Conditions: 150 mM KOAc, 10 mM MgCl2 and 150 mM bicine (pH 8.5), 24 C. An RNA of 177 nucleotides, treated with 2A3 and DMS and read out base by base. Reactivities are rounded to 0.1 and cut off at 0 and 3.
RNA sequence: GGGAACGACUCGAGUAGAGUCGAAAAGGGGGCGGGUAUCUCGCUGUUUGGCUUGUUGAUUUCCGUAGCGUUUGCCCCGGAGACUCGAGGGAUGUCACUGGCGCAGACCAGCAAUAUGACGAUCCGCCUUCCAUUAAAGAUUCGUCUUUAAUGGAAGAAAAGAAACAACAACAACAAC
Reactivity to 2A3 in 0.01 (KOAc 150mM, MgCl2 10mM, bicine 150mM(pH8.5), 24C), signal-to-noise 5, nucleotides 027 to 126: g040g000g010g020g000c040g000g020g010u040a050u020c070u040c080g020c030u030g050u070u090u080g030g000c000u020u080g060u150u100g260a120u060u070u010c020c010g030u040a020g000c020g040u030u060u130g060c000c000c000c000g030g020a020g010a010c020u000c020g020a100g000g060g020a020u050g000u010c000a010c020u010g010g000c110g000c150a030g030a130c040c020a000g010c020a030a060u220a130u230g030a020c090g020a020u020c000c010g010c000
Reactivity to DMS in 0.01 (KOAc 150mM, MgCl2 10mM, bicine 150mM(pH8.5), 24C), signal-to-noise 9, nucleotides 027 to 126: g010g010g010g010g020c030g010g000g020u000a060u000c040u000c180g020c030u000g000u000u010u010g010g010c050u000u000g010u010u000g000a100u000u000u010c010c020g000u000a300g000c080g010u000u000u000g010c030c030c040c020g010g010a090g000a030c030u000c020g010a180g000g000g000a030u000g010u000c010a070c010u000g000g010c120g010c090a050g010a050c070c060a030g010c120a080a090u010a100u000g010a040c080g000a040u000c010c010g000c080
The DMS profile rests on 30,890 reads. The 2A3 profile rests on 9,991 reads.